This 207-nucleotide RNA was probed chemically with 2A3. The data come from the RNA Mapping Database (RMDB), library M2RFPK. Reactivities are given for positions 27 through 156. Conditions: 150 mM KOAc, 10 mM MgCl2 and 150 mM bicine (pH 8.5), 24 C. The 2A3 profile rests on 609 reads.
RNA sequence: GGGAACGACUCGAGUAGAGUCGAAAAGAAAGAAAGAAGCGAGCUGGCGCAGCCGCACGGGCACCCGUCAAUCCAGCACUUCACAAGUCUUGUCGUUCUGACAGGACAUCCAUCAACCCACCGGGAAAAAAGGACUACAGCUUCGGCUGUAGUCCAACAUACGCGAAAGGUUCGCCUUUCGCGUAUGAAAAGAAACAACAACAACAAC
Reactivity to 2A3 in 0.01 (KOAc 150mM, MgCl2 10mM, bicine 150mM(pH8.5), 24C), signal-to-noise 1, nucleotides 027 to 156: g000a000a010a000g040a020a150a010g000a100a040g030c020g010a020g000c010u000g000g030c000g000c070a020g110c090c050g130c070a040c030g010g080g000c050a090c040c000c000g120u120c070a000a050u060c000c000a000g030c040a030c010u130u060c040a080c010a150a120g000u000c010u000u020g020u000c020g150u300u220c210u300g000a010c000a000g000g020a000c000a000u000c000c020a020u100c030a090a130c030c000c000a050c070c080g000g010g000a000a020a000a130a130a010g010g000a040c000u020a010c010a010g030c030u030u210c270g070g000c010u000g010u000a000g000u000c000c000a000a000